[RMDB]
RNA sequence: GGGAACGACUCGAGUAGAGUCGAAAAUUAGAGUUGUGAUUACAUUUGUAUAACAAUGCUUAAGUCACGUAAGCGUCGGGCUGCACCCAAAGACAUAUACCCAACAUGCAAAAUAAUGAAUAAUUGAUGACUAUACUAGUUUCGACUAGUAUAGUCAAAAAGAAACAACAACAACAAC
Reactivity to 2A3 in 0.01 (KOAc 150mM, MgCl2 10mM, bicine 150mM(pH8.5), 24C), signal-to-noise 3, nucleotides 027 to 126: u120u050a040g010a020g100u080u080g000u010g040a030u050u120a020c020a070u130u190u300g030u020a110u020a160a020c000a020a030u030g020c020u130u050a120a020g030u060c010a010c100g020u060a050a020g010c010g040u020c020g000g030g000c010u030g000c030a050c030c000c030a040a010a000g040a000c010a010u080a020u040a090c000c000c000a020a030c030a020u090g000c020a010a050a070a090u200a090a140u190g080a070a080u180a160a070u120u040g070a070
Reactivity to DMS in 0.01 (KOAc 150mM, MgCl2 10mM, bicine 150mM(pH8.5), 24C), signal-to-noise 6, nucleotides 027 to 126: u010u010a060g000a160g020u000u000g010u000g000a140u010u010a070c030a220u010u010u020g030u000a050u010a090a050c070a020a030u000g000c040u000u000a050a090g000u000c040a050c100g010u000a080a120g010c050g030u000c060g010g010g020c040u010g020c050a100c010c010c030a040a080a100g000a050c070a060u000a080u000a110c010c010c010a070a090c130a050u010g010c090a070a060a060a060u020a060a050u010g000a080a060u010a060a080u010u000g000a270